[RMDB]
RNA sequence: GGGAACGACUCGAGUAGAGUCGAAAAAAGUCGCGAAGCGUAAAACCGUCAUGUGCGGUGACGAGAUUAAUCGCGGCACUCGGCAGACGACCAUUACGUUUAAAAACAUCGCUGGAGGCAGCAAAAACGUACCGUAUUACUUCGGUAAUACGGUACGAAAAGAAACAACAACAACAAC
Reactivity to 2A3 in 0.01 (KOAc 150mM, MgCl2 10mM, bicine 150mM(pH8.5), 24C), signal-to-noise 2, nucleotides 027 to 126: a000a000g070u080c070g000c030g050a050a030g060c010g030u030a060a220a050a090c050c000g000u020c100a300u230g100u080g060c040g000g100u030g010a010c010g000a020g000a140u090u250a140a060u050c000g000c000g000g000c000a020c010u030c000g060g000c010a040g010a070c020g040a080c000c030a030u030u140a070c060g000u080u000u140a040a100a000a010a000c020a080u100c080g030c030u050g060g000a030g000g130c020a020g000c010a110a070a000a000a000
Reactivity to DMS in 0.01 (KOAc 150mM, MgCl2 10mM, bicine 150mM(pH8.5), 24C), signal-to-noise 3, nucleotides 027 to 126: a090a050g010u010c030g020c030g000a050a040g030c010g000u000a050a080a050a090c060c000g010u000c020a070u010g030u020g000c050g000g040u010g010a030c030g010a060g010a110u010u020a090a080u000c000g020c000g000g020c010a010c030u000c020g000g000c010a020g000a040c030g010a100c060c090a160u000u030a040c090g030u000u010u000a040a070a120a130a060c100a110u010c120g010c030u000g020g000a100g030g000c040a050g020c040a030a080a050a050a120